This 207-nucleotide RNA was probed chemically with DMS. The DMS profile rests on 2,823 reads. For DMS the reverse transcriptase was MarathonRT. The reactions ran in a buffer of 150 mM KOAc, 10 mM MgCl2 and 150 mM bicine (pH 8.5), at 24 C.
RNA sequence: GGGAACGACUCGAGUAGAGUCGAAAACGCCUCACCUGCAUCAUCCAGUCGCUUGACGGUACCUGGCACCGGCCCUUCACCACCCUGGAGUUGGCCGCGCUGCAGAGCCUGGUGGACCCGGAAGAACAGUUGAUCCUCGACGGCCUGAGCGACAGCGGGAAGAGAAGUGAUUCGUCACUUCUCUUCCAAAAGAAACAACAACAACAAC
Reactivity to DMS in 0.01 (KOAc 150mM, MgCl2 10mM, bicine 150mM(pH8.5), 24C), signal-to-noise 1, nucleotides 027 to 156: c040g010c020c010u000c050a040c040c000u010g060c060a080u000c030a140u000c040c020a190g000u010c040g030c030u000u010g000a120c080g030g020u020a100c060c040u010g030g020c040a130c050c000g020g020c010c000c050u000u000c010a100c060c010a130c100c060c000u000g000g010a050g040u000u050g030g010c040c010g010c050g050c010u010g000c030a050g010a190g060c030c050u000g060g050u000g000g020a080c010c020c040g010g040a100a090g000a060a080c020a150g000u000u000g010a110u000c030c020u000c030g020a170c040g020g020c000c000u000g020a060g030c030g030a060c030a060g020c070g010